[RMDB]
RNA sequence: GGGAACGACUCGAGUAGAGUCGAAAAGCUAUACCGUUCGCGGUAUAGCAAAAUCUAUCCGAGAUGUACUAAUACGAGCCUAUUAGUCAACGGUUCGAGUCCAAACGGGUUACUUCGGUAACCCGAAGACUUAAUCUCUCUUCGGAGAGAUUAAGUCAAAAGAAACAACAACAACAAC
Reactivity to DMS in 0.01 (KOAc 150mM, MgCl2 10mM, bicine 150mM(pH8.5), 24C), signal-to-noise 4, nucleotides 027 to 126: g000c000u000a000u000a010c010c000g040u010u010c190g030c000g010g010u000a000u000a010g020c010a030a020a060a100u000c020u000a040u010c020c000g010a090g010a140u000g000u000a020c010u000a030a020u000a040c080g010a100g030c250c180u000a030u010u000a020g000u000c030a080a100c060g010g010u000u010c060g000a080g010u000c020c030a020a120a240c020g000g000g000u000u000a000c000u000u010c180g040g000u010a000a010c000c000c000g000a020a030
Reactivity to 2A3 in 0.01 (KOAc 150mM, MgCl2 10mM, bicine 150mM(pH8.5), 24C), signal-to-noise 3, nucleotides 027 to 126: g000c010u000a000u000a010c010c010g000u030u060c260g000c010g060g000u000a000u000a010g000c000a010a000a000a000u010c010u010a020u010c010c000g050a060g020a180u080g050u140a010c010u040a010a030u020a050c140g160a060g090c020c040u020a020u040u000a010g020u030c020a070a050c020g020g000u020u030c030g020a020g030u040c030c010a050a090a070c030g000g000g000u010u000a000c000u030u080c200g070g000u000a000a020c000c000c010g000a000a000